[RMDB]
RNA sequence: GGGAACGACUCGAGUAGAGUCGAAAAUAUACAUCAGAAGUCGGCACAACUCCCGACUCGCGGUGAGCGAUGCAGCGUAGCUAGAGCUACGCAGCUGCUGUGCGGAUGGCUAGCAAAAGCUAGCCUAGCUCACCGUAGUCUUCGGACUACGGUGAGCAAAAGAAACAACAACAACAAC
Reactivity to 2A3 in 0.01 (KOAc 150mM, MgCl2 10mM, bicine 150mM(pH8.5), 24C), signal-to-noise 2, nucleotides 027 to 126: u030a000u000a010c000a020u070c000a000g200a260a040g090u010c010g010g130c070a010c010a190a300c120u040c020c000c000g000a000c020u000c000g000c050g030g000u030g040a030g000c010g230a170u150g000c000a000g000c000g050u000a000g010c010u050a060g060a060g240c000u000a000c000g000c000a000g000c010u040g000c000u030g040u080g100c020g040g040a030u060g000g000c000u010a000g080c020a000a020a300a000g010c000u000a000g000c000c000u000a020
Reactivity to DMS in 0.01 (KOAc 150mM, MgCl2 10mM, bicine 150mM(pH8.5), 24C), signal-to-noise 1, nucleotides 027 to 126: u010a080u000a200c050a020u000c020a060g000a170a020g010u000c030g030g000c040a070c130a100a090c210u020c030c000c000g020a010c100u010c000g070c300g060g000u000g000a160g000c080g000a130u020g000c000a110g050c000g010u000a010g000c000u010a140g000a070g000c020u020a000c000g020c070a020g060c000u000g050c040u000g010u020g020c000g000g000a010u000g000g020c020u000a010g000c040a080a040a050a170g000c000u030a000g000c000c000u000a030
An RNA of 177 nucleotides, treated with 2A3 and DMS and read out base by base. The reactions ran in a buffer of 150 mM KOAc, 10 mM MgCl2 and 150 mM bicine (pH 8.5), at 24 C. For DMS, 1,394 sequencing reads were counted. High DMS reactivity at an A or C suggests that its Watson-Crick edge is free. The data come from the RNA Mapping Database (RMDB), library OK1LIB.